[RMDB]
Structure probing data (2A3 and DMS) for a 177-nucleotide construct. 2A3 adducts were read by reverse transcription with SuperScript II with manganese. It was measured as part of the RMDB library OK1LIB. The 2A3 profile rests on 11,667 reads.
RNA sequence: GGGAACGACUCGAGUAGAGUCGAAAACUACAAAAACACAAAAAUCACCCAGGCAUGAUGGCAGGUGCCUGUAAUCCCAGCUACUAGGGAGGCUGAGGCAGGAGAAUUGCUUUAAUCCGGGACGUGGCUAGGUACGUAGUUUCGACUACGUACCUAGAAAAGAAACAACAACAACAAC
Reactivity to 2A3 in 0.01 (KOAc 150mM, MgCl2 10mM, bicine 150mM(pH8.5), 24C), signal-to-noise 9, nucleotides 027 to 126: c040u170a060c110a050a130a010a070a010c100a020c070a070a090a050a020a080u130c040a080c020c010c010a020g030g010c040a020u080g040a040u110g110g000c020a030g020g080u070g110c000c000u030g020u070a020a070u060c010c020c000a010g010c020u070a050c010u050a080g050g050g000a030g020g000c010u020g030a070g050g020c010a010g010g040a050g030a080a070u110u040g000c010u050u070u120a030a020u030c020c000g000g010g040a040c070g030u050g040g000
Reactivity to DMS in 0.01 (KOAc 150mM, MgCl2 10mM, bicine 150mM(pH8.5), 24C), signal-to-noise 4, nucleotides 027 to 126: c040u000a080c240a040a040a070a030a040c120a080c130a050a040a070a110a120u020c080a090c090c030c030a060g000g010c050a050u000g010a090u030g000g000c020a030g000g020u030g000c010c020u020g000u000a120a070u020c020c020c000a030g030c060u010a060c080u000a080g020g000g020a060g010g010c020u010g020a030g000g000c040a020g000g000a070g010a030a090u050u000g000c000u000u040u030a130a060u000c000c020g020g000g000a100c120g000u020g000g020
Description
DMS adducts were read by reverse transcription with MarathonRT. For DMS, 7,026 sequencing reads were counted.